[RMDB]
RNA sequence: GGGAACGACUCGAGUAGAGUCGAAAAAGGACGCCUAUCAGGUUGUGCUGCCAGAGCGUCAGCGACCCGACAUCCCCGCCAAGAUCGAGAGUGGCGGUGUCGGUAGCCGCCUCGUAGCGGACGGUGUUCUCGUUCACGUCAGCGAUCUCGCUCAUCAAUAACACUUACUCUUCGGAGUAAGUGUUAUAAAAGAAACAACAACAACAAC
Reactivity to 2A3 in 0.01 (KOAc 150mM, MgCl2 10mM, bicine 150mM(pH8.5), 24C), signal-to-noise 3, nucleotides 027 to 156: a000g050g010a010c050g020c020c000u120a170u120c060a070g120g000u130u090g080u170g020c010u040g050c040c030a030g020a030g030c030g050u070c050a010g000c040g030a050c040c010c000g000a000c000a030u060c080c070c010c000g020c030c000a140a060g130a230u140c060g090a070g010a000g130u010g010g000c020g010g000u010g010u000c000g030g010u030a010g030c000c010g000c000c000u030c030g010u030a020g020c010g020g040a030c060g040g000u020g020u110u000c090u030c040g020u040u040c070a070c150g080u060c100a010g020c010g030a140u050c060u070c050g080c010u080c040a160u120c030a110
Reactivity to DMS in 0.01 (KOAc 150mM, MgCl2 10mM, bicine 150mM(pH8.5), 24C), signal-to-noise 1, nucleotides 027 to 156: a050g020g000a030c000g030c080c030u010a210u000c020a080g030g020u000u010g050u020g060c020u010g000c000c070a210g010a100g010c050g000u010c000a200g020c000g000a070c050c000c000g010a030c020a060u010c020c020c010c000g010c020c000a190a140g020a170u000c130g010a140g020a080g030u000g010g020c070g000g020u000g000u000c020g020g000u010a150g050c000c010g010c030c020u010c150g000u000a140g020c020g010g000a050c000g000g040u000g020u000u000c050u020c060g000u000u000c030a030c070g000u020c040a070g000c020g000a070u000c040u000c020g000c010u000c070a180u070c070a140